An RNA of 177 nucleotides, treated with DMS and 2A3 and read out base by base. The DMS profile rests on 25,334 reads. The RNA was probed in 150 mM KOAc, 10 mM MgCl2 and 150 mM bicine (pH 8.5) at 24 C.

RNA sequence: GGGAACGACUCGAGUAGAGUCGAAAAUCGUGCAGCCAUGGAAGCGCCGGAGUGAUCCAGGUGUGGAGGCUGCACGAGUGAGAAUGCAGGCAUGAGUAGCGAAAGACGAGUGAGAAACUCGUCCGCCCUACAUAUAUACCUUCGGGUAUAUAUGUAGAAAAGAAACAACAACAACAAC
Reactivity to DMS in 0.01 (KOAc 150mM, MgCl2 10mM, bicine 150mM(pH8.5), 24C), signal-to-noise 9, nucleotides 027 to 126: u000c000g020u000g010c010a010g010c000c010a230u000g010g010a290a220g000c010g020c010c000g000g000a010g000u010g000a140u000c000c000a100g060g010u000g010u000g000g010a060g010g010c000u000g000c010a000c000g000a010g000u000g010a110g000a090a070u000g010c040a050g000g010c060a050u000g000a090g010u000a090g010c040g010a100a100a140g000a010c000g000a010g010u000g000a170g010a140a120a040c000u000c000g010u000c000c050g010c070c070
Reactivity to 2A3 in 0.01 (KOAc 150mM, MgCl2 10mM, bicine 150mM(pH8.5), 24C), signal-to-noise 8, nucleotides 027 to 126: u020c000g000u000g000c000a000g000c000c020a130u300g060g020a020a010g010c010g000c000c010g000g010a010g020u090g020a060u020c070c090a160g010g000u020g000u010g010g030a020g000g000c000u000g000c000a000c000g000a000g000u020g000a080g050a070a040u110g010c040a020g060g000c030a050u090g040a050g090u080a020g040c030g040a120a070a020g000a000c010g000a000g000u020g010a100g120a110a120a020c000u000c000g000u000c010c000g010c000c010